Description
An RNA of 177 nucleotides, treated with DMS and 2A3 and read out base by base. The reactions ran in a buffer of 150 mM KOAc, 10 mM MgCl2 and 150 mM bicine (pH 8.5), at 24 C. Values are in units of 0.01, from 0 to 300, in steps of 10. For 2A3, 4,342 sequencing reads were counted. Source: RMDB library OK2TRN, as collected in RNAgym.

RNA sequence: GGGAACGACUCGAGUAGAGUCGAAAACAUCCACUGCUACGGCAGUGGAUGAACGAGGUAGGUACGCCUACCUCGAAAGGUCGAUGUCACCAUAAACAUUAAACGUCCAUGGUACGCCAUGGACGAAGGUAGCAGUAGUGUUCGCACUACUGCUACCAAAAGAAACAACAACAACAAC
Reactivity to DMS in 0.01 (KOAc 150mM, MgCl2 10mM, bicine 150mM(pH8.5), 24C), signal-to-noise 2, nucleotides 027 to 126: c000a010u000c000c000a010c000u000g020c000u010a100c210g040g050c000a010g010u020g010g000a000u000g000a010a110c020g000a030g000g000u000a010g000g010u000a100c260g030c000c010u010a000c000c000u000c000g000a010a040a140g010g000u000c020g000a010u000g000u000c130a050c000c010a240u010a010a010a020c020a020u000u000a020a060a190c020g010u000c000c000a010u000g000g030u000a100c300g010c030c000a000u000g000g010a000c040g000a030a010
Reactivity to 2A3 in 0.01 (KOAc 150mM, MgCl2 10mM, bicine 150mM(pH8.5), 24C), signal-to-noise 2, nucleotides 027 to 126: c010a000u000c010c000a000c010u000g030c000u030a080c160g180g000c000a010g020u000g000g000a000u000g000a020a010c010g000a000g020g000u000a000g000g020u040a020c230g090c030c000u000a000c000c000u010c000g000a010a010a010g020g010u040c060g020a020u010g020u050c050a010c040c040a090u150a060a060a000c020a010u050u110a100a130a050c020g010u000c010c000a000u000g000g010u030a050c270g060c050c000a000u010g040g000a000c010g000a010a000